[RMDB]
Source: RMDB library OK3TST, as collected in RNAgym.
Chemical mapping of a 207-nucleotide RNA with DMS and 2A3.
The RNA was probed in 150 mM KOAc, 10 mM MgCl2 and 150 mM bicine (pH 8.5) at 24 C.
The DMS profile rests on 1,492 reads.
For DMS the reverse transcriptase was MarathonRT.
RNA sequence: GGGAACGACUCGAGUAGAGUCGAAAAUCCCAAAGGUUGCCGAAUCCGAAAGGUAGGGAGGAACCGCUUUUUGGGGUUAAUCUGCAGUGAAGCUGCAGUAGGGAUACCUUCUGUCCCGCACCCGACAGCUAACUCCCUAGGCAAUAAAGGAAGGAGAAAAUGGUACUCACUUCGGUGAGUACCAUUUAAAAGAAACAACAACAACAAC
Reactivity to DMS in 0.01 (KOAc 150mM, MgCl2 10mM, bicine 150mM(pH8.5), 24C), signal-to-noise 1, nucleotides 027 to 156: u000c000c000c000a040a110a210g000g020u020u000g020c000c000g010a220a260u050c050c000g000a090a150a080g000g000u000a050g000g000g010a120g000g000a140a070c060c040g020c050u000u000u000u000u000g060g000g120g090u000u000a060a120u000c010u000g020c030a030g050u020g080a200a180g040c000u000g010c000a020g010u000a030g010g000g010a000u000a020c060c150u000u010c050u000g060u040c050c000c010g010c120a110c030c010c000g040a090c050a050g020c010u020a150a250c010u000c050c030c000u000a100g010g000c020a100a090u000a060a150a100g000g010a090a010g090g050a270g000a050
Reactivity to 2A3 in 0.01 (KOAc 150mM, MgCl2 10mM, bicine 150mM(pH8.5), 24C), signal-to-noise 1, nucleotides 027 to 156: u020c000c000c000a040a040a000g050g000u010u020g010c020c000g160a100a110u020c000c000g040a020a100a040g020g050u020a010g020g020g000a020g000g020a080a090c110c060g010c090u180u230u020u010u170g110g040g000g010u020u050a020a030u050c000u000g040c010a030g030u060g280a190a020g090c000u000g020c020a000g000u010a010g000g020g000a010u080a120c010c000u010u010c000u040g000u020c000c000c000g000c010a020c010c010c010g030a070c070a020g000c000u000a000a060c000u000c000c000c000u010a000g010g000c010a020a000u050a040a020a000g060g010a000a000g060g000a050g040a050